An RNA of 177 nucleotides, treated with DMS and 2A3 and read out base by base.
RNA sequence: GGGAACGACUCGAGUAGAGUCGAAAAGAUAUGGAGUGUACCAGCGAGUAACCAUCGGAAACGAUGGAAUUACGAUGAGCUGACACUCCUAAGUCAAAGCAAGAACGUAGUUCGCUACGUUCUUGCAGGUCCAAUAAUAGUUCGCUAUUAUUGGACCAAAAGAAACAACAACAACAAC
Reactivity to DMS in 0.01 (KOAc 150mM, MgCl2 10mM, bicine 150mM(pH8.5), 24C), signal-to-noise 9, nucleotides 027 to 126: g010a020u000a040u010g010g000a020g020u000g000u010a140c300c050a010g010c010g020a050g010u000a010a040c000c000a000u000c000g020g000a020a010a030c000g010a010u000g000g000a080a110u010u000a010c000g020a240u020g000a300g010c000u000g000a060c000a000c000u000c000c000u000a000a050g000u000c010a110a140a180g010c010a010a000g010a010a010c000g020u000a010g010u000u010c300g020c000u000a000c000g010u000u000c000u000u000g010c000a020
Reactivity to 2A3 in 0.01 (KOAc 150mM, MgCl2 10mM, bicine 150mM(pH8.5), 24C), signal-to-noise 9, nucleotides 027 to 126: g000a000u010a010u050g000g000a010g000u020g010u080a300c280c070a010g000c020g050a070g020u000a020a030c000c000a000u000c000g000g000a010a010a000c010g000a000u010g000g030a080a060u090u010a010c040g130a230u300g070a030g000c000u000g000a000c000a000c000u000c000c000u000a010a000g000u000c030a090a080a040g000c000a000a000g000a000a000c000g010u000a000g020u080u130c300g020c170u000a000c000g000u000u010c000u000u000g000c000a000

Description: For DMS the reverse transcriptase was MarathonRT. The RNA was probed in 150 mM KOAc, 10 mM MgCl2 and 150 mM bicine (pH 8.5) at 24 C. For 2A3 the reverse transcriptase was SuperScript II with manganese.